[RMDB]
RNA sequence: GGGAACGACUCGAGUAGAGUCGAAAAUUUAAGAGCGUAGUUGUCUCUGUCACGAUACGAGUAAGUGACUCUCGUGUACUACUGACGAAUGAGACAGAGACAUUUAUGCUCAGUGUCAGUCAAGGAACCGUGUUUAUAUAUUCGUAUAUAAACACGGAAAAGAAACAACAACAACAAC
Reactivity to DMS in 0.01 (KOAc 150mM, MgCl2 10mM, bicine 150mM(pH8.5), 24C), signal-to-noise 9, nucleotides 027 to 126: u000u010u010a110a120g010a010g010c010g030u000a010g000u000u000g010u000c000u000c000u000g010u000c000a100c070g010a100u000a070c020g000a080g000u000a030a090g010u000g010a060c070u010c180u010c180g010u000g020u010a040c050u000a060c040u000g000a110c060g000a120a060u010g010a100g010a010c000a010g010a010g010a020c010a000u000u000u000a010u000g000c010u000c000a080g010u010g000u000c060a080g010u010c090a070a110g000g010a100a190
Reactivity to 2A3 in 0.01 (KOAc 150mM, MgCl2 10mM, bicine 150mM(pH8.5), 24C), signal-to-noise 9, nucleotides 027 to 126: u150u140u080a170a050g000a000g000c000g000u000a010g020u020u010g000u000c000u000c000u010g010u000c010a010c090g050a020u050a070c010g000a010g020u050a170a120g040u080g220a060c010u020c010u010c080g120u110g020u070a060c020u010a020c020u060g140a090c050g080a100a080u140g020a060g000a070c000a000g000a000g000a000c000a000u000u040u000a010u010g000c000u000c000a000g000u010g060u050c040a040g030u030c050a060a080g120g030a080a060